[RMDB]
An RNA of 207 nucleotides, treated with DMS and 2A3 and read out base by base.
Values cover nucleotides 27 to 156.
For 2A3, 2,874 sequencing reads were counted.
For DMS the reverse transcriptase was MarathonRT.
The DMS profile rests on 4,526 reads.
The RNA was probed in 150 mM KOAc, 10 mM MgCl2 and 150 mM bicine (pH 8.5) at 24 C.

RNA sequence: GGGAACGACUCGAGUAGAGUCGAAAAGUUAGGUGAGGCUCCUAUGCAAACACAGGCCACUGCCCAAAAAUGUCCAAAGACGCCAAUGGGUAGAACAGGGAUUGUCGGAUUAAGGCUUUUCAUAAUGAAAACAAAGUAUGCUUCGGCAUACUUUGAACGUAUCAUUUUACUUCGGUAAAAUGAUACGAAAAGAAACAACAACAACAAC
Reactivity to DMS in 0.01 (KOAc 150mM, MgCl2 10mM, bicine 150mM(pH8.5), 24C), signal-to-noise 3, nucleotides 027 to 156: g000u000u010a050g030g000u010g020a060g020g030c050u010c040c030u000a060u020g030c030a100a140a110c040a090c040a090g000g020c020c030a120c030u010g010c000c000c000a000a040a070a070a120u010g000u000c000c050a080a100a170g000a060c070g040c030c050a080a230u000g010g000g010u010a030g000a090a080c090a070g020g020g010a080u000u000g000u010c050g010g000a170u000u010a070a080g000g010c010u000u000u000u010c020a090u010a090a090u000g010a050a050a050a150c000a010a020a010g020u000a020u000g010c000u010u010c300g070g010c000a010u000a000c000u000u000u000g000a030a100
Reactivity to 2A3 in 0.01 (KOAc 150mM, MgCl2 10mM, bicine 150mM(pH8.5), 24C), signal-to-noise 3, nucleotides 027 to 156: g050u050u040a020g020g020u050g050a050g020g040c040u050c060c030u110a100u150g020c050a070a150a030c040a020c020a100g070g000c020c000a030c010u000g000c000c000c000a000a040a020a010a010u030g000u000c020c020a160a090a110g010a000c010g010c010c010a020a010u020g000g000g000u020a020g020a020a030c050a050g000g070g030a090u020u070g030u060c010g010g020a030u080u130a070a040g030g000c000u080u040u030u040c070a100u080a200a070u130g130a060a060a030a010c000a000a000a000g010u000a000u000g000c000u030u080c170g070g000c000a010u000a010c030u000u000u000g000a010a000